[RMDB]
RNA sequence: GGGAACGACUCGAGUAGAGUCGAAAAAAUUAGGAGGACACUUCUAAAGCAUUUCUCUCUAACACAACCAAAUAGUCUGCUGAAGGUGAACUGCUUUAGUGAGGAGGGAAGCCGUGGCCGUGAACUCGGCCAACAGGAAUUUCGAUUCCUGUUGGCCAAAAGAAACAACAACAACAAC
Reactivity to DMS in 0.01 (KOAc 150mM, MgCl2 10mM, bicine 150mM(pH8.5), 24C), signal-to-noise 1, nucleotides 027 to 126: a100a090u000u000a010g000g000a030g030g000a030c200a090c120u010u010c010u000a050a030a020g020c040a050u010u000u000c000u000c010u010c100u010a100a110c110a010c120a020a100c090c110a060a110a080u010a070g010u010c040u010g040c120u000g000a150a080g000g000u010g000a030a050c100u000g000c020u000u000u000a070g010u010g010a160g010g000a130g000g010g010a060a020g010c040c060g010u000g000g000c070c040g040u000g030a100a060c090u000c060